[RMDB]
RNA sequence: GGGAACGACUCGAGUAGAGUCGAAAACAUAAGAGUAGGGCUGACGUCCUCAACAACCUUACAACCUGGGCAAGGUGGUUGCUAUAAAGCGAUGUCGACAAUUCGGACAACGAAUCAGGUUGGAUAACAGCUACGUACAGUUCGCUGUACGUAGCUGAAAAGAAACAACAACAACAAC
Reactivity to 2A3 in 0.01 (KOAc 150mM, MgCl2 10mM, bicine 150mM(pH8.5), 24C), signal-to-noise 3, nucleotides 027 to 126: c060a030u300a180a050g010a000g080u170a060g100g000g060c010u080g070a010c120g030u030c000c030u050c000a060a130c010a010a050c050c020u060u090a020c010a000a020c000c010u060g010g040g040c040a060a060g100g030u060g040g010u020u000g000c000u110a060u140a300a050a000g020c000g000a000u070g040u090c010g030a090c070a100a000u140u000c020g060g030a060c090a160a050c170g010a030a020u050c010a020g010g040u060u050g000g040a010u180a110a080
Reactivity to DMS in 0.01 (KOAc 150mM, MgCl2 10mM, bicine 150mM(pH8.5), 24C), signal-to-noise 2, nucleotides 027 to 126: c160a120u070a010a130g000a080g050u000a040g010g000g000c020u020g010a180c150g000u030c000c000u000c060a070a100c190a110a080c110c060u010u020a090c030a020a050c010c020u040g000g000g000c150a060a060g010g000u020g000g050u000u000g000c010u010a040u000a020a000a230g000c000g010a100u000g040u010c040g010a080c190a010a110u000u000c040g010g010a030c060a050a120c010g000a050a150u030c010a000g010g000u000u000g000g000a170u030a030a110